RNA sequence: GGGAACGACUCGAGUAGAGUCGAAAACCUACCCAAGGUGAAAGCUCCUUCUCUCGCAAUGUGUAACUCAUGAUUCUCAUGACCCCUGGUUGGAGAGAUCCGGGCUAGGAGCCAGGGGGCCUCUGAUAAAGCCAGACGCACUUCGGUGCGUCUGGAAGACAUCAUUGUUGUUCGCAACAAUGAUGUCAAAAGAAACAACAACAACAAC
Reactivity to 2A3 in 0.01 (KOAc 150mM, MgCl2 10mM, bicine 150mM(pH8.5), 24C), signal-to-noise 2, nucleotides 027 to 156: c030c000u060a070c000c010c010a080a070g000g010u070g070a210a030a000g010c010u000c020c020u070u000c010u000c000u010c020g090c120a090a110u050g040u050g040u190a120a050c030u010c020a010u020g000a180u300u060c130u110c080a020u050g020a040c000c000c020c080u030g030g010u030u040g010g010a000g010a000g010a020u010c060c060g050g000g000c000u030a040g000g050a000g000c010c000a010g030g020g010g000g000c020c020u040c070u040g110a130u160a180a120a030g020c000c020a010g000a000c010g000c000a000c010u020u070c140g090g000u000g030c010g000u000c000u000g020g000a000a020